Source information
Structure probing data (2A3 and DMS) for a 177-nucleotide construct. 2A3 adducts were read by reverse transcription with SuperScript II with manganese. The reactions ran in a buffer of 150 mM KOAc, 10 mM MgCl2 and 150 mM bicine (pH 8.5), at 24 C. DMS adducts were read by reverse transcription with MarathonRT.
RNA sequence: GGGAACGACUCGAGUAGAGUCGAAAAGUUAUGCAAAACGUCUUAGCUACCACUACAACAACAAUGCUGGACGGUGAUGGUUCGACUUACUCGAAACCAUCACGUAGUGGUAGUCGUUCCCAUUCAAGCACCAUGUUACGUUCGCGUAACAUGGUGCAAAAGAAACAACAACAACAAC
Reactivity to 2A3 in 0.01 (KOAc 150mM, MgCl2 10mM, bicine 150mM(pH8.5), 24C), signal-to-noise 3, nucleotides 027 to 126: g040u030u060a110u190g110c050a040a040a050a070c020g020u010c020u140u180a040g000c010u020a010c000c020a020c020u070a010c010a130a000c010a030a000c030a120a160u190g040c050u080g120g000a020c030g020g040u000g000a020u010g010g030u020u010c000g000a040c070u090u200a060c050u090c010g010a060a040a030c010c000a020u030c020a010c000g000u010a020g000u000g000g000u000a000g000u000c000g000u000u000c000c000c030a030u100u110c030a040a020
Reactivity to DMS in 0.01 (KOAc 150mM, MgCl2 10mM, bicine 150mM(pH8.5), 24C), signal-to-noise 2, nucleotides 027 to 126: g010u000u030a040u010g010c140a120a070a040a040c020g020u010c090u010u030a060g000c000u020a020c030c020a060c070u000a040c070a030a080c110a040a000c210a080a080u020g010c120u000g010g000a050c090g040g010u000g000a010u000g040g000u000u000c010g000a020c230u010u000a100c290u000c000g040a020a030a070c070c000a000u000c000a000c060g000u010a010g010u020g000g000u000a040g000u010c010g030u000u000c000c010c000a220u010u010c090a050a150